[RMDB]
RNA sequence: GGGAACGACUCGAGUAGAGUCGAAAAACCAAGGCGAUGGUGGAAGGGCAGAGGGAGGAAUGCAAGCCACGGGAUUCGGAAAUCGAAAUGUAACUUGUUCGCCGAGGCCGCCUGGUGGCUGACAGCCAUGAGGCUCAGCUUUCGAGCUGAGCCUCAUAAAAGAAACAACAACAACAAC
Reactivity to DMS in 0.01 (KOAc 150mM, MgCl2 10mM, bicine 150mM(pH8.5), 24C), signal-to-noise 1, nucleotides 027 to 126: a150c010c080a090a150g000g010c010g020a030u000g020g000u000g000g000a090a070g000g000g000c060a070g000a100g010g010g000a070g010g030a080a060u020g040c100a040a090g030c010c040a000c000g000g000g000a100u000u000c030g010g000a120a040a030u030c100g000a000a060a040u080g000u020a100a190c110u050u000g000u000u010c000g020c020c000g000a030g000g020c020c070g000c050c080u010g000g010u000g000g030c000u000g010a100c120a030g000c070c100
Reactivity to 2A3 in 0.01 (KOAc 150mM, MgCl2 10mM, bicine 150mM(pH8.5), 24C), signal-to-noise 1, nucleotides 027 to 126: a000c000c000a040a020g020g000c030g100a140u120g040g000u000g020g030a120a050g000g000g000c070a130g000a050g060g000g000a020g000g100a060a000u100g100c110a010a000g090c000c000a000c000g070g000g000a000u010u000c000g030g080a050a210a130u070c000g050a040a010a010u300g000u010a070a000c010u130u130g040u000u000c000g070c000c000g000a050g000g000c030c000g000c000c000u020g130g000u000g000g020c100u090g000a120c030a100g000c010c000
Conditions: 150 mM KOAc, 10 mM MgCl2 and 150 mM bicine (pH 8.5), 24 C. The record gives the reactivity of an RNA of 177 nucleotides to DMS and 2A3. Values cover nucleotides 27 to 126. The data come from the RNA Mapping Database (RMDB), library OK1LIB. DMS (dimethyl sulfate) methylates the pairing face of unpaired adenines and cytosines. DMS adducts were read by reverse transcription with MarathonRT.